RNA sequence: GGGAACGACUCGAGUAGAGUCGAAAAAACAUUACUGUCGCCGUUAGUCGCAAAGACUUCAAAUAGGCUGUCUUUAUCGGCGACAUCACACUCAUAGAUGACAGCCUCGGGAUCUGACCAGAAGCGGACCGCAACAUAUGUUCGCAUAUGUUGCGGUAAAAGAAACAACAACAACAAC
Reactivity to DMS in 0.01 (KOAc 150mM, MgCl2 10mM, bicine 150mM(pH8.5), 24C), signal-to-noise 2, nucleotides 027 to 126: a050a030c170a080u010u030a040c130u010g000u000c010g010c000c010g000u000u040a040g010u010c000g020c220a090a070a090g020a070c030u020u000c180a030a050a050u010a070g000g000c000u000g010u010c020u030u000u000a030u000c020g000g020c010g010a020c060a000u010c140a100c160a100c060u000c160a120u000a050g020a090u000g010a010c010a010g000c000c010u000c050g010g020g000a070u010c040u010g010a200c070c030a120g010a090a070g020c090g000g010
Reactivity to 2A3 in 0.01 (KOAc 150mM, MgCl2 10mM, bicine 150mM(pH8.5), 24C), signal-to-noise 1, nucleotides 027 to 126: a000a000c170a090u260u220a110c060u050g000u020c020g000c020c020g010u070u120a030g000u010c020g010c110a180a220a090g050a010c000u060u040c220a130a110a040u130a060g070g000c010u000g000u030c020u000u230u130a090u130c030g000g050c000g000a000c000a000u020c010a030c000a090c000u110c010a110u120a130g170a090u090g000a010c000a000g000c000c000u000c000g030g000g000a090u020c020u070g080a130c050c060a040g050a200a010g060c070g020g050